[RMDB]
RNA sequence: GGGAACGACUCGAGUAGAGUCGAAAAGAACACAUGGAUCUGAAAGCGCUUAAACCGAAGUUAGUUGGAUCGGAUAACGAACGUGCAGUGUCGCCAGUGAUCGGGGUCAUCCUGAUGGUGGCCAUCAUCAUAUUUUAAGUUUCGACUUAAAAUAUGAAAAAGAAACAACAACAACAAC
Reactivity to DMS in 0.01 (KOAc 150mM, MgCl2 10mM, bicine 150mM(pH8.5), 24C), signal-to-noise 9, nucleotides 027 to 126: g010a100a080c050a050c070a080u000g010g010a100u000c040u000g010a080a120a130g010c060g010c050u000u000a050a090a130c050c030g000a070a090g010u010u000a090g010u010u000g010g010a090u000c040g010g010a110u010a050a060c110g010a050a070c130g010u000g010c070a060g010u010g010u000c060g010c040c020a060g010u000g000a060u000c050g010g010g000g010u010c110a050u010c010c060u000g000a070u000g020g020u000g010g010c020c030a050u010c100a120
Reactivity to 2A3 in 0.01 (KOAc 150mM, MgCl2 10mM, bicine 150mM(pH8.5), 24C), signal-to-noise 7, nucleotides 027 to 126: g020a030a000c020a000c020a120u110g040g010a040u030c020u090g060a110a060a040g030c030g020c040u090u110a100a050a020c030c010g030a060a010g060u060u110a040g020u070u170g070g030a060u040c030g000g050a070u070a080a030c070g010a060a010c040g040u060g000c050a030g030u030g030u110c020g000c030c010a030g050u060g090a060u060c030g020g010g010g050u100c030a060u080c020c040u100g040a070u160g010g040u010g020g000c030c000a030u060c010a010

Overview
The record gives the reactivity of an RNA of 177 nucleotides to DMS and 2A3. The DMS profile rests on 31,602 reads. Reactivities are given for positions 27 through 126. The RNA was probed in 150 mM KOAc, 10 mM MgCl2 and 150 mM bicine (pH 8.5) at 24 C.